[RMDB]
RNA sequence: GGGAACGACUCGAGUAGAGUCGAAAAGUCUCAGUGGUGUACGGUACAAACCCAUGAGAGCCCUGGUAGUCAUCCGCCUGUCCCGCGUCACCGAUGCUACGACUUCACCGGAGCGUCAGCUGGAGUCUUGCCAGCGGCUCUGCGCCCAGCGCGGGUGUCGUUGGGUAAUAUUCGUAUUACCCAACGAAAAAGAAACAACAACAACAAC
Reactivity to 2A3 in 0.01 (KOAc 150mM, MgCl2 10mM, bicine 150mM(pH8.5), 24C), signal-to-noise 3, nucleotides 027 to 156: g030u000c010u050c020a060g070u050g170g010u130g020u080a080c080g050g090u130a120c130a090a190a050c020c000c000a030u060g010a010g000a020g070c000c000c000u000g020g010u050a070g030u090c040a030u050c060c080g080c060c040u050g010u110c000c030c000g020c020g020u010c060a060c060c080g000a010u020g010c020u040a020c030g070a090c080u180u120c140a070c070c040g010g000a000g010c010g120u120c040a090g000c010u020g020g000a070g070u150c080u200u120g090c000c000a000g000c010g010g000c000u020c000u000g000c000g020c000c010c020a030g010c000g000c000g020g030g040u020g000
Reactivity to DMS in 0.01 (KOAc 150mM, MgCl2 10mM, bicine 150mM(pH8.5), 24C), signal-to-noise 1, nucleotides 027 to 156: g040u000c000u030c020a140g030u000g010g020u020g020u000a070c070g030g030u010a140c080a050a180a090c040c010c010a090u000g010a060g000a100g030c020c030c020u000g020g030u000a040g010u010c000a060u000c000c070g020c050c000u020g040u000c010c010c010g020c030g000u010c040a110c080c040g000a040u000g020c000u000a030c010g010a160c080u010u000c050a120c030c030g030g040a060g010c020g040u010c060a090g000c020u010g020g020a180g000u000c150u010u000g050c010c030a030g030c020g010g000c030u010c000u010g000c050g010c020c040c030a150g000c040g040c020g000g000g030u000g000
This 207-nucleotide RNA was probed chemically with 2A3 and DMS. Conditions: 150 mM KOAc, 10 mM MgCl2 and 150 mM bicine (pH 8.5), 24 C. It was measured as part of the RMDB library OK3TST. Values are in units of 0.01, from 0 to 300, in steps of 10.